[RMDB]
Structure probing data (DMS and 2A3) for a 177-nucleotide construct. Source: RMDB library OK1LIB, as collected in RNAgym.
RNA sequence: GGGAACGACUCGAGUAGAGUCGAAAAUACGCACACAAGUUGAUUUAUUCAAAGAAGUCUUUUCUAUACCAGGAAAUAUUUGCUCACAACCUUUAGCCAUUCCUCUCAUAGGAGAACUUGCAGGGUAGAUGAUAGGUAGCUUCGGCUACCUAUCAUCAAAAGAAACAACAACAACAAC
Reactivity to DMS in 0.01 (KOAc 150mM, MgCl2 10mM, bicine 150mM(pH8.5), 24C), signal-to-noise 1, nucleotides 027 to 126: u000a110c140g000c010a020c190a070c030a100a060g000u000u000g000a030u000u000u000a080u000u000c070a080a010a140g000a110a120g000u000c020u000u000u000u000c030u010a060u050a220c050c070a020g000g020a020a020a080u090a060u040u000u040g000c080u000c070a000c090a100a100c060c000u000u000u020a010g050c030c020a020u040u000c030c000u000c040u060c070a070u060a090g010g000a030g040a090a090c120u000u030g000c100a070g040g000g000u030a170
Reactivity to 2A3 in 0.01 (KOAc 150mM, MgCl2 10mM, bicine 150mM(pH8.5), 24C), signal-to-noise 2, nucleotides 027 to 126: u090a030c040g060c000a020c010a010c020a210a020g110u110u030g040a050u060u130u040a170u120u220c060a120a010a000g030a060a000g040u050c010u010u040u030u010c010u050a030u040a130c000c030a040g050g030a040a030a000u130a060u090u060u110g060c030u030c000a070c000a000a130c010c000u060u110u080a020g030c020c000a070u060u000c000c000u040c000u020c020a040u110a040g080g000a110g010a080a070c020u020u070g020c020a030g000g060g000u030a010